[RMDB]
RNA sequence: GGGAACGACUCGAGUAGAGUCGAAAACAAAUUCACAUGUUCCAAUCCUAACCCCCAACUUGAUGGUAUUAGGAGGUUGGAUGUUUGGGAGGUGAUUAGAUCAUGAGAGUAGAACCCUCAUGAAUGUGAUUAGUAACCUUAUAAAAGAGUCAACAGACAGUCCCUAGUAGUUCGCUACUAGGGACUGAAAAGAAACAACAACAACAAC
Reactivity to 2A3 in 0.01 (KOAc 150mM, MgCl2 10mM, bicine 150mM(pH8.5), 24C), signal-to-noise 3, nucleotides 027 to 156: c030a010a070a020u080u070c010a010c020a040u120g090u040u110c000c020a020a070u000c020c000u040a010a040c000c000c000c000c010a010a040c030u070u070g060a100u140g170g070u110a120u110u090a140g050g040a010g000g010u000u000g020g000a040u030g050u010u060u090g010g030g000a050g010g060u090g050a030u090u060a080g090a140u040c000a000u010g010a000g000a010g000u140a040g050a090a100c000c020c000u010c000a000u010g000a010a090u040g000u010g030a040u020u030a050g050u060a060a070c010c000u090u110a170u120a190a040a040a040g050a030g070u130c050a040a030c030a030g120a130
Reactivity to DMS in 0.01 (KOAc 150mM, MgCl2 10mM, bicine 150mM(pH8.5), 24C), signal-to-noise 2, nucleotides 027 to 156: c010a020a040a120u010u000c020a060c110a180u020g010u030u020c010c030a070a090u000c030c000u000a060a040c050c010c010c020c050a020a090c080u060u040g010a110u010g040g020u000a080u000u010a090g020g010a020g010g010u000u020g010g000a100u000g000u010u010u020g010g000g030a070g000g050u010g010a030u010u000a110g000a110u010c020a040u000g000a040g010a010g040u000a240g000a080a300c040c020c000u000c010a000u020g040a060a060u000g010u000g000a110u000u000a090g000u000a070a040c010c000u010u000a170u010a080a020a090a130g010a090g020u010c030a030a060c080a190g010a230
The record gives the reactivity of an RNA of 207 nucleotides to 2A3 and DMS. For 2A3, 1,154 sequencing reads were counted.